RNA sequence: GGGAACGACUCGAGUAGAGUCGAAAACCGGAGCGAAAGCUCCAAUAUCUAGUGUACCCUCGCUGACUAUGUGAUCUUAUUAAAAUUAGGUUAAAUCGAGGUUAAAAAUAGUUUUAAUAUUGCUAAGAGGUCUUGCGAAAGCUUACCACACAAGAUGGCUAUAUCUACUGUUCGCAGUAGAUAUAGCAAAAGAAACAACAACAACAAC
Reactivity to DMS in 0.01 (KOAc 150mM, MgCl2 10mM, bicine 150mM(pH8.5), 24C), signal-to-noise 2, nucleotides 027 to 156: c040c050g030g000a040g020c020g030a160a110a290g020c010u010c000c010a050a060u000a060u000c070u020a110g000u000g010u000a120c080c010c010u000c030g020c040u000g020a100c020u000a070u000g010u000g000a090u010c070u000u000a120u010u000a050a050a070a120u010u030a040g010g000u000u020a040a130a090u010c070g020a090g020g010u000u000a030a130a070a070a040u000a030g000u000u000u000u000a020a110u000a070u010u010g010c030u020a080a200g000a180g020g030u000c030u000u040g020c030g020a080a080a130g010c060u000u000a100c010c010a120c030a050c030a030a050g000a090u000g000
Reactivity to 2A3 in 0.01 (KOAc 150mM, MgCl2 10mM, bicine 150mM(pH8.5), 24C), signal-to-noise 5, nucleotides 027 to 156: c040c020g010g000a000g010c010g020a120a040a000g000c010u010c000c000a010a020u110a050u020c040u040a040g020u000g020u100a090c010c020c000u000c010g020c040u030g040a050c020u060a080u180g090u050g050a070u040c030u060u130a090u080u120a100a050a070a060u100u050a050g010g040u030u060a030a080a030u110c030g010a030g020g000u050u060a040a090a000a010a030u020a010g000u010u000u010u060a080a100u090a060u110u120g000c010u030a070a030g030a050g130g030u030c030u070u080g010c010g050a070a040a010g000c010u040u050a020c040c010a030c010a010c010a030a030g040a060u110g120